[RMDB]
RNA sequence: GGGAACGACUCGAGUAGAGUCGAAAAGCUAGUCGGAGACGACUAGCAACGAUCAGUUCGCUGAUCGGAACGUGCAUUCAAAUACGCUAGAAGCACGAAUAGGCGACGCAUAGCGUAAAACUGAGAAAGCAGAUAACAAAAAUAAAAAGGCGUCGCGCAUAGUCGGUAUAUUCGUAUACCGACUAUGAAAAGAAACAACAACAACAAC
Reactivity to DMS in 0.01 (KOAc 150mM, MgCl2 10mM, bicine 150mM(pH8.5), 24C), signal-to-noise 2, nucleotides 027 to 156: g010c000u000a020g010u000c000g040g010a300g000a300c000g000a030c000u010a000g000c010a040a010c010g010a030u000c020a000g030u010u000c300g020c010u000g030a000u000c020g000g020a080a060c020g030u000g020c010a190u000u000c030a040a110a230u000a020c010g000c000u000a120g000a090a100g030c010a020c030g000a080a080u000a100g000g000c000g020a040c000g010c010a200u000a080g000c000g000u000a020a060a070a170c030u010g000a270g000a210a080a120g010c030a040g010a150u010a080a180c040a020a080a050a120a090u010a020a010a070a070a180g000g030c000g010u000c010g030c000g020
Reactivity to 2A3 in 0.01 (KOAc 150mM, MgCl2 10mM, bicine 150mM(pH8.5), 24C), signal-to-noise 5, nucleotides 027 to 156: g000c010u000a000g010u000c000g010g040a060g000a130c000g000a000c000u000a000g000c000a000a010c000g000a000u000c000a010g020u090u080c120g050c120u010g000a000u000c000g000g030a050a020c010g010u020g000c080a280u000u050c020a030a030a050u080a020c010g010c010u020a010g000a040a000g010c000a000c000g000a030a090u200a110g070g000c000g000a000c000g010c030a040u070a050g020c000g000u030a020a070a040a090c030u030g000a030g150a230a090a030g120c060a020g040a090u210a150a060c100a070a080a040a050a010u220a110a100a040a020a000g060g000c010g000u000c000g000c010g000
Chemical mapping of a 207-nucleotide RNA with DMS and 2A3. The 2A3 profile rests on 3,957 reads.